[RMDB]
RNA sequence: GGGAACGACUCGAGUAGAGUCGAAAAAGCAGCCGUGCCUGGACGCCAGCGUUCGCUGGUCAACAGCCAGAGUGAAACUGGGGUAAACCUAUAGAUAGGUAGGCCAUGGGGUAGGGGGUCUGGCCCCAGUGGAUAAAUCUUUCGAGAUUUAUCCACUAAAAGAAACAACAACAACAAC
Reactivity to DMS in 0.01 (KOAc 150mM, MgCl2 10mM, bicine 150mM(pH8.5), 24C), signal-to-noise 8, nucleotides 027 to 126: a080g020c070a120g010c030c030g030u000g020c040c010u000g010g000a110c220g000c010c000a010g010c060g000u020u020c100g000c000u010g000g010u000c060a100a170c290a140g000c020c010a010g000a060g000u020g000a040a110a150c030u010g000g000g000g020u010a070a100a060c020c000u000a100u030a110g010a120u020a030g000g010u000a060g000g000c030c030a070u020g010g000g000g020u010a080g000g000g010g000g000u010c040u000g000g000c020c010c040c090
Reactivity to 2A3 in 0.01 (KOAc 150mM, MgCl2 10mM, bicine 150mM(pH8.5), 24C), signal-to-noise 8, nucleotides 027 to 126: a000g050c050a020g030c030c020g090u080g020c010c020u020g030g040a040c040g050c020c000a030g000c040g130u140u170c110g000c020u020g000g010u050c030a070a070c010a040g010c010c010a030g030a020g040u170g070a090a050a040c030u020g000g010g010g030u060a100a080a070c010c010u020a030u060a130g210a190u100a040g030g040u010a020g050g000c030c030a060u110g020g000g000g040u070a080g020g020g000g000g030u010c050u050g110g000c000c000c000c000